Conditions: 150 mM KOAc, 10 mM MgCl2 and 150 mM bicine (pH 8.5), 24 C.
Chemical mapping of a 207-nucleotide RNA with 2A3 and DMS.
The data come from the RNA Mapping Database (RMDB), library OK3TST.
[RMDB]
RNA sequence: GGGAACGACUCGAGUAGAGUCGAAAAUGGGUGGUUCCGUAUCACCAGUAAGAACAUAAUAGUCGAAUACAGUAUCCGAUUGAGAUUUUGCAUACAAUACUAGUCUAGAAAGAAAUUUAUAAUCAUCUUCUGUGACAGGAGUCCAUAUAUCUGUAUCGUAACUGUCUGAUUUCGAUCAGACAGUUACAAAAGAAACAACAACAACAAC
Reactivity to 2A3 in 0.01 (KOAc 150mM, MgCl2 10mM, bicine 150mM(pH8.5), 24C), signal-to-noise 4, nucleotides 027 to 156: u060g020g030g000u040g010g000u070u100c070c090g050u150a040u050c000a010c010c010a010g070u120a140a020g030a080a040c060a050u190a130a070u080a140g120u070c050g020a050a020u070a040c030a040g070u060a050u030c040c070g110a110u070u130g040a120g030a080u060u090u080u160g070c040a020u060a110c030a110a000u030a110c050u040a030g030u010c010u030a010g050a050a120a000g040a020a090a020u150u290u150a210u140a150a080u080c040a040u000c010u020u000c020u010g100u040g020a020c020a030g050g000a010g040u040c050c030a020u070a000u010a020u130c030u040g030u030a070u090c030
Reactivity to DMS in 0.01 (KOAc 150mM, MgCl2 10mM, bicine 150mM(pH8.5), 24C), signal-to-noise 2, nucleotides 027 to 156: u010g020g020g060u010g010g000u000u010c070c100g040u000a080u000c050a060c050c010a100g000u020a020a040g000a090a110c150a120u000a140a110u000a100g000u010c020g030a060a050u000a090c080a200g010u000a050u000c040c020g010a060u000u000g010a190g000a190u000u000u000u000g030c060a150u010a140c030a110a090u010a060c050u000a110g000u000c040u000a110g010a100a060a160g000a090a040a040u000u000u000a110u000a090a070u000c010a100u000c010u000u000c010u010g040u000g010a100c000a110g020g010a070g040u010c030c050a050u010a080u000a080u000c030u000g010u000a070u010c100